Source: RMDB library OK1LIB, as collected in RNAgym. The record gives the reactivity of an RNA of 177 nucleotides to 2A3 and DMS.
RNA sequence: GGGAACGACUCGAGUAGAGUCGAAAAGGAGGCCGAGCUGGUUUUGCCUUCCGACGUGGUUGACAGGUGGCUGCGCGAGUCUCGCGGCCCGCUGCCGCUAAAUGUCAAUCACGAUGAGUCGGCUACCAAAAGUUCAGUGAUUCGUCACUGAACUUUUAAAAGAAACAACAACAACAAC
Reactivity to 2A3 in 0.01 (KOAc 150mM, MgCl2 10mM, bicine 150mM(pH8.5), 24C), signal-to-noise 5, nucleotides 027 to 126: g050g010a030g030g020c030c030g050a050g090c150u240g080g050u090u070u170u180g060c010c000u040u030c010c010g020a020c010g000u000g000g000u000u010g000a000c000a010g000g020u010g050g000c010u030g000c020g010c060g020a080g040u010c050u070c170g100c160g010g000c000c000c010g010c020u070g000c010c010g000c010u050a170a150a120u020g000u000c000a000a000u000c000a000c000g000a050u060g010a010g020u010c010g000g020c040u040a070c020c030
Reactivity to DMS in 0.01 (KOAc 150mM, MgCl2 10mM, bicine 150mM(pH8.5), 24C), signal-to-noise 6, nucleotides 027 to 126: g000g000a180g000g010c020c030g010a100g010c130u020g000g000u000u010u020u020g020c000c010u000u000c060c020g000a110c010g030u000g000g000u000u000g000a000c000a020g010g020u100g000g000c000u000g000c010g010c040g000a080g000u000c010u000c300g020c300g000g000c010c020c010g000c010u040g050c000c060g020c000u000a020a110a070u010g000u010c000a010a000u000c000a000c010g000a050u030g000a110g000u000c020g000g000c090u020a130c030c040
Notes
2A3 is a SHAPE reagent: it acylates the 2'-hydroxyl of flexible nucleotides of all four kinds. The DMS profile rests on 19,012 reads. The RNA was probed in 150 mM KOAc, 10 mM MgCl2 and 150 mM bicine (pH 8.5) at 24 C. For 2A3, 12,273 sequencing reads were counted.